[RMDB]
RNA sequence: GGGAACGACUCGAGUAGAGUCGAAAAAAGAGACAGGCCCUUAACCCUGGUUGAUGAACCAUGACCGUGCGGCUAGAGCGUGAUUGACGGCUACGAUCGUCCUCGGACGCAUCCAGUGCUGUAGAGGACACCAGUAUAACUUCGGUUAUACUGGUGUAAAAGAAACAACAACAACAAC
Reactivity to 2A3 in 0.01 (KOAc 150mM, MgCl2 10mM, bicine 150mM(pH8.5), 24C), signal-to-noise 9, nucleotides 027 to 126: a000a010g140a010g010a020c060a060g010g040c020c010c000u030u090a070a060c010c000c020u020g030g000u020u040g070a150u100g050a020a020c030c000a060u060g050a040c010c040g030u060g020c020g020g010c010u050a030g010a010g050c050g030u060g030a150u030u130g040a040c010g010g020c010u100a060c070g060a080u040c010g010u010c010c010u040c050g080g090a020c030g010c020a030u030c040c040a040g070u030g060c010u030g010u100a040g010a040g050g030
Reactivity to DMS in 0.01 (KOAc 150mM, MgCl2 10mM, bicine 150mM(pH8.5), 24C), signal-to-noise 9, nucleotides 027 to 126: a070a050g000a100g000a080c070a060g010g000c020c010c030u010u010a100a120c060c020c010u010g000g000u010u000g010a100u010g000a090a070c080c040a050u010g000a080c080c050g010u000g010c050g010g000c030u010a070g000a130g010c040g010u010g000a100u010u010g010a090c040g000g010c030u010a100c180g000a050u010c030g010u000c020c020u020c130g010g000a060c070g010c080a040u010c050c070a110g010u010g000c010u000g010u010a090g010a100g000g000